[RMDB]
Conditions: 150 mM KOAc, 10 mM MgCl2 and 150 mM bicine (pH 8.5), 24 C. Structure probing data (DMS) for a 177-nucleotide construct. It was measured as part of the RMDB library M2PK90.

RNA sequence: GGGAACGACUCGAGUAGAGUCGAAAAUCAAACCCGCCCUUGUAGCUCAGUGGUAGAGCGCUUCACUCGUAUUCCAAUACUGCCAUGAAGAGGUCCGGGGUUCAAUCCCGCGUGGUGGCAAAAAAAACAUUCUAAACCUCUUCGGAGGUUUAGAAUGAAAAGAAACAACAACAACAAC
Reactivity to DMS in 0.01 (KOAc 150mM, MgCl2 10mM, bicine 150mM(pH8.5), 24C), signal-to-noise 1, nucleotides 027 to 126: u010c150a090a130a140c020c000c060g030c120c010c020u000u020g030u000a060g000c070u000c000a160g030u030g020g000u020a120g020a020g040c060g010c060u000u000c030a080c070u000c020g020u040a060u000u000c110c040a120a140u000a100c080u000g000c030c010a080u020g000a070a060g030a040g000g020u030c080c000g000g020g000g010u000u010c190a180a150u000c010c000c000g020c030g040u040g010g020u000g020g040c060a010a000a000a000a090a060a050a130